An RNA of 207 nucleotides, treated with 2A3 and DMS and read out base by base.
The reactions ran in a buffer of 150 mM KOAc, 10 mM MgCl2 and 150 mM bicine (pH 8.5), at 24 C.
[RMDB]
RNA sequence: GGGAACGACUCGAGUAGAGUCGAAAAUCCUUUUCCCUGUUCUACUAAUAAUUUGUUUUUUACUCUAUUUCUCUCUUCUUUUAAGAAUGUACUUGCUUGAUUGAAAAGCUUCUUAGAGGAACAUUGUGUGUCUAACACAAGGAAGUUUAAGGCAACACCACUGUAUUUAGUUCGCUAAAUACAGUGGAAAAGAAACAACAACAACAAC
Reactivity to 2A3 in 0.01 (KOAc 150mM, MgCl2 10mM, bicine 150mM(pH8.5), 24C), signal-to-noise 3, nucleotides 027 to 156: u060c040c000u080u000u020u020c030c000c030u040g080u050u070c050u050a080c030u040a120a180u080a150a180u160u050u080g010u000u050u010u020u020u040a060c010u040c010u080a120u040u220u010c040u010c000u010c000u040u000c010u000u070u030u010a000a050g030a060a060u100g030u070a150c030u040u050g100c000u040u070g100a210u110u080g030a160a150a020a000g010c000u010u000c000u010u040a020g010a010g020g030a030a030c030a040u060u050g000u000g000u010g070u050c090u150a070a000c010a010c010a060a020g040g030a070a010g020u020u050u090a020a010g050g000c000a030a010c010a040
Reactivity to DMS in 0.01 (KOAc 150mM, MgCl2 10mM, bicine 150mM(pH8.5), 24C), signal-to-noise 1, nucleotides 027 to 156: u020c030c010u000u000u000u020c000c010c010u000g000u030u000c070u020a250c040u000a090a110u020a120a150u010u020u010g000u000u000u000u000u000u000a050c020u000c010u000a050u000u000u000c010u010c010u010c010u010u000c000u000u000u000u000a010a050g000a050a010u000g000u010a060c060u000u010g030c010u000u000g020a270u010u020g000a080a040a040a060g040c030u000u000c030u000u000a040g000a120g000g030a010a040c040a090u000u000g020u000g000u000g010u010c150u000a090a030c010a000c020a010a060g000g030a070a070g020u000u010u000a030a010g030g010c070a060a080c110a130